[RMDB]
RNA sequence: GGGAACGACUCGAGUAGAGUCGAAAAGCUUUGUUCAUUUGCUUAAAAGAAUCACCGCUAUCAUUUCUAGCUGAUAACAGGCCGUCAAUUACCCAUCUUAUGAUUUUUGCCUUUAGCAUUGGUGAAUACCACAUUGCCAUGUCAACAAAGACUACAGCGAUCUCUGUAUCUUCGGAUACAGAGAUCGAAAAGAAACAACAACAACAAC
Reactivity to 2A3 in 0.01 (KOAc 150mM, MgCl2 10mM, bicine 150mM(pH8.5), 24C), signal-to-noise 2, nucleotides 027 to 156: g010c040u150u130u050g000u040u100c070a090u050u040u100g010c010u060u100a100a080a030a030g040a030a020u070c040a070c090c080g010c090u050a030u190c060a190u050u140u100c070u040a020g000c030u000g020a060u000a130a020c000a030g020g000c030c010g090u070c040a020a050u110u100a150c020c000c020a020u040c050u080u080a130u140g140a270u090u030u050u100u170g030c020c000u050u040u000a030g000c020a090u020u150g010g000u060g060a070a020u090a120c050c060a060c040a150u060u030g000c000c000a050u060g040u130c000a000a040c000a060a160a000g050a040c050u110a060c090a030g100